[RMDB]
RNA sequence: GGGAACGACUCGAGUAGAGUCGAAAAGAUAUGGAUGUAGUAGCGAUAAGCUGGUAUCGGAAACGAUACCCAGCUUUUGACGCUGACUACAUCCUAAGUCAAAGUAGUCCCGUUCGCGGGACUACAAGCAGUAUGACUAGUUCGCUAGUCAUACUGCAAAAGAAACAACAACAACAAC
Reactivity to DMS in 0.01 (KOAc 150mM, MgCl2 10mM, bicine 150mM(pH8.5), 24C), signal-to-noise 3, nucleotides 027 to 126: g020a050u000a180u010g020g000a030u000g000u000a010g010u010a020g020c000g040a150u020a020a010g040c000u000g010g020u000a000u000c000g020g010a030a030a090c000g020a020u010a010c180c080c080a010g030c000u000u000u020u020g040a230c070g020c000u000g010a050c000u000a000c020a000u010c010c000u000a000a040g000u000c020a160a140a200g000u000a010g000u000c000c000c010g050u010u010c220g060c010g020g000g000a000c000u010a000c000a040a110
Reactivity to 2A3 in 0.01 (KOAc 150mM, MgCl2 10mM, bicine 150mM(pH8.5), 24C), signal-to-noise 2, nucleotides 027 to 126: g010a000u030a010u090g010g000a000u010g000u000a000g010u010a000g000c020g110a250u040a300a000g000c000u010g010g000u010a000u030c000g000g020a020a010a000c010g000a000u010a000c060c000c000a010g000c000u030u010u050u220g230a110c040g000c000u040g080a040c000u000a010c010a000u010c000c000u000a000a020g000u000c050a020a170a110g000u000a000g000u020c000c040c010g000u030u050c300g010c010g060g000g010a000c000u000a000c000a000a030
The record gives the reactivity of an RNA of 177 nucleotides to DMS and 2A3.
High 2A3 reactivity points to a flexible backbone, as in loops and unpaired stretches.
The DMS profile rests on 3,608 reads.
Reactivities are given for positions 27 through 126.